[RMDB]
RNA sequence: GGGAACGACUCGAGUAGAGUCGAAAACGGGGCCGAAUUCCCACUCGAGGUGGGACGACUUUAUGGUCUGACUUAAGGGAUUGGUGUUGACGCCCGGGUCCUGCGCAACAGGAACCCACGAAUCCUGAGUGCAUCGACAUUUCGAUGUCGAUGCACUAAAAGAAACAACAACAACAAC
Reactivity to DMS in 0.01 (KOAc 150mM, MgCl2 10mM, bicine 150mM(pH8.5), 24C), signal-to-noise 1, nucleotides 027 to 126: c020g000g000g010g010c010c000g000a010a100u040u000c000c000c000a060c010u010c070g010a230g040g020u000g060g000g000a110c110g000a030c000u000u080u040a110u050g030g000u000c010u010g010a190c010u000u000a050a190g000g000g000a100u000u000g000g010u010g000u000u000g000a150c120g000c000c030c010g000g000g000u000c000c010u000g000c160g080c260a090a110c000a000g000g000a120a100c030c040c040a130c020g000a060a000u000c010c000u000g000
Reactivity to 2A3 in 0.01 (KOAc 150mM, MgCl2 10mM, bicine 150mM(pH8.5), 24C), signal-to-noise 1, nucleotides 027 to 126: c110g000g000g000g000c010c000g030a000a120u110u000c000c060c040a030c000u120c110g300a080g000g240u020g000g000g000a000c000g010a030c030u130u190u090a120u190g020g000u020c000u040g090a020c000u070u190a070a040g000g030g030a070u000u010g000g070u000g030u170u170g020a050c000g060c000c040c000g010g010g000u010c000c000u000g000c200g000c050a050a140c000a040g030g050a050a160c000c000c000a030c000g090a010a010u000c000c000u000g010
Chemical mapping of a 177-nucleotide RNA with DMS and 2A3. For 2A3, 627 sequencing reads were counted. The reactions ran in a buffer of 150 mM KOAc, 10 mM MgCl2 and 150 mM bicine (pH 8.5), at 24 C.